[RMDB]
RNA sequence: GGGAACGACUCGAGUAGAGUCGAAAACUUGUGUAACUUCAUUUAAAUGAAUUGAAACAAAUUUAAUACAAGUGGAUGUAGGAUAACCGUCCGUCCUUUACAUUGGUAUAAAAGUGAUCUAAAAUUCGGCAGGGACGAGUCUUCGGACUCGUCCCAAGUAUCCUAUUCCGUUCGCGGAAUAGGAUACAAAAGAAACAACAACAACAAC
Reactivity to 2A3 in 0.01 (KOAc 150mM, MgCl2 10mM, bicine 150mM(pH8.5), 24C), signal-to-noise 1, nucleotides 027 to 156: c010u030u010g030u010g030u040a060a040c010u030u060c030a100u110u070u300a130a160a210u070g030a030a040u070u140g040a060a020a050c100a160a140a020u200u300u300a100a000u110a100c030a060a020g000u000g130g110a100u030g010u130a040g000g040a040u040a040a130c030c030g030u000c000c000g030u000c000c000u070u100u070a080c000a060u050u190g010g000u130a100u010a100a070a000a040g060u110g080a040u030c030u070a030a060a210a120u300u070c030g070g000c080a070g020g000g000a000c000g020a000g000u030c030u010u060c090g000g000a000c040u010c000g000u000c010c000c000a000a000
Chemical mapping of a 207-nucleotide RNA with 2A3.
Conditions: 150 mM KOAc, 10 mM MgCl2 and 150 mM bicine (pH 8.5), 24 C.
It was measured as part of the RMDB library M2RFPK.